Chemical mapping of a 207-nucleotide RNA with 2A3. For 2A3, 650 sequencing reads were counted. The RNA was probed in 150 mM KOAc, 10 mM MgCl2 and 150 mM bicine (pH 8.5) at 24 C. 2A3 is a SHAPE reagent: it acylates the 2'-hydroxyl of flexible nucleotides of all four kinds.

RNA sequence: GGGAACGACUCGAGUAGAGUCGAAAAUCUACUUUUUAUUCAGUGAUCGUGUUCUCCAGUUGCAGAAGGAGAGGAAAGUACUUGUACUCAUCCAUUGCGAAUCGCUUCAAUCGUUUGAUUCUUUUUUUGCUCAGAAGUUGAAAUAUGCAGACUUAAAGAUCACUACUGAGUUCGCUCAGUAGUGAUCAAAAGAAACAACAACAACAAC
Reactivity to 2A3 in 0.01 (KOAc 150mM, MgCl2 10mM, bicine 150mM(pH8.5), 24C), signal-to-noise 2, nucleotides 027 to 156: u000c010u000a040c020u060u100u060u100u090a140u230u140c060a020g020u000g050a040u000c020g000u020g050u180u000c010u000c010c000a000g060u120u150g090c030a020g020a130a100g010g020a020g010a020g000g050a050a030a010g030u040a060c050u080u110g050u030a040c000u030c070a250u030c030c000a050u050u160g030c000g050a020a070u000c030g020c100u050u020c100a050a110u030c080g060u020u050u070g020a070u030u010c030u000u000u030u070u000u130u170g020c030u040c070a060g030a130a040g080u100u160g060a040a160a000u190a060u140g040c020a020g020a040c020u040u050a060a040a010

Values cover nucleotides 27 to 156.